[RMDB]
RNA sequence: GGGAACGACUCGAGUAGAGUCGAAAAACGAGUGAGUUACGACUCACUCGACUUUUAAUGCUACCCAAAGGUCGUGACAAGUCGAUAAAACGCAGCGUCAAAAAGUCCGACGUUACGACGUCGGACAACGAGCGAGUUCUGUUCGCAGAACUCGCAACUCAUGUAAAAGGUUCGCCUUUUACAUGAGAAAAGAAACAACAACAACAAC
Reactivity to DMS in 0.01 (KOAc 150mM, MgCl2 10mM, bicine 150mM(pH8.5), 24C), signal-to-noise 2, nucleotides 027 to 156: a140c010g000a000g010u000g000a030g010u000u020a130c250g020a210c000u000c000a030c010u000c000g010a000c040u000u000u020u000a020a160u000g000c020u010a030c010c020c020a120a100a080g000g040u000c000g000u010g000a300c020a020a160g000u000c000g010a160u000a030a140a030a130c010g010c060a150g020c100g020u000c080a100a090a090a100a100g000u000c010c010g010a030c010g040u000u000a100c180g020a150c010g000u000c040g000g000a000c010a000a030c060g010a120g020c020g000a050g020u000u000c010u000g000u000u000c270g040c010a050g000a020a020c000u010c000g060c010a000a010
Reactivity to 2A3 in 0.01 (KOAc 150mM, MgCl2 10mM, bicine 150mM(pH8.5), 24C), signal-to-noise 6, nucleotides 027 to 156: a000c010g000a000g000u000g000a000g010u020u090a110c240g030a030c060u000c000a000c000u000c000g000a000c000u030u040u020u130a150a080u120g060c030u070a060c000c000c000a060a060a030g050g010u030c030g020u020g030a070c050a090a060g020u090c020g060a090u080a150a120a010a010c060g000c060a030g020c010g100u100c080a070a080a020a030a030g000u000c000c000g000a010c010g010u000u040a090c260g010a000c000g030u000c000g000g030a000c010a000a010c030g040a020g000c010g000a000g000u010u000c010u010g030u030u060c190g010c100a000g000a000a000c000u000c000g000c000a000a000
Chemical mapping of a 207-nucleotide RNA with DMS and 2A3. It was measured as part of the RMDB library M2RFPK. For DMS, 3,768 sequencing reads were counted. For 2A3, 5,992 sequencing reads were counted. Values cover nucleotides 27 to 156.